Description
This 207-nucleotide RNA was probed chemically with DMS and 2A3. The RNA was probed in 150 mM KOAc, 10 mM MgCl2 and 150 mM bicine (pH 8.5) at 24 C. DMS adducts were read by reverse transcription with MarathonRT. 2A3 adducts were read by reverse transcription with SuperScript II with manganese. The DMS profile rests on 3,987 reads.

[RMDB]
RNA sequence: GGGAACGACUCGAGUAGAGUCGAAAAUGCAGCUUAUUUCAGAACUCCUUUUGCUACUGGAACUGCUUCAGUAUAAAAUGGCUGGAACUUCAAGUUCAGAAUUGAUUACAUUAGUACGUUCUUUAGGUUUGGGUUCUUAUUUUUUAGGAGUUUAUGACGUAUCCAAUACUUUCGAGUAUUGGAUACGAAAAGAAACAACAACAACAAC
Reactivity to DMS in 0.01 (KOAc 150mM, MgCl2 10mM, bicine 150mM(pH8.5), 24C), signal-to-noise 2, nucleotides 027 to 156: u000g030c030a020g020c030u010u000a050u010u000u010c050a130g040a010a080c020u010c020c000u010u000u000u010g010c050u000a010c030u010g030g000a020a170c090u000g010c110u000u000c040a060g030u000a070u010a070a100a060a100u000g010g010c070u000g000g010a060a040c020u000u010c140a070a140g040u000u000c050a030g010a060a080u010u000g020a180u000u000a080c070a190u000u010a090g010u000a080c090g010u000u000c030u000u000u010a080g000g000u010u000u000g000g020g020u000u000c020u000u000a050u020u000u000u010u000u010a050g020g030a100g020u000u000u000a110u010g010a210
Reactivity to 2A3 in 0.01 (KOAc 150mM, MgCl2 10mM, bicine 150mM(pH8.5), 24C), signal-to-noise 4, nucleotides 027 to 156: u080g000c010a040g000c050u120u150a070u080u220u040c010a010g010a040a010c010u050c000c010u000u100u130u270g060c030u010a020c010u030g020g030a070a040c010u040g040c010u030u010c020a030g000u000a030u100a130a100a020a020u070g100g000c040u040g040g030a010a030c010u120u100c100a080a050g030u040u010c000a010g030a060a060u090u120g060a060u160u130a030c050a060u050u050a030g010u010a030c050g000u020u010c010u010u060u050a050g000g020u000u050u040g070g000g010u060u050c020u030u080a100u040u080u030u010u060u050a030g020g000a050g000u050u080u020a100u070g020a010
Source: RMDB library OK3TST, as collected in RNAgym. For 2A3, 2,437 sequencing reads were counted.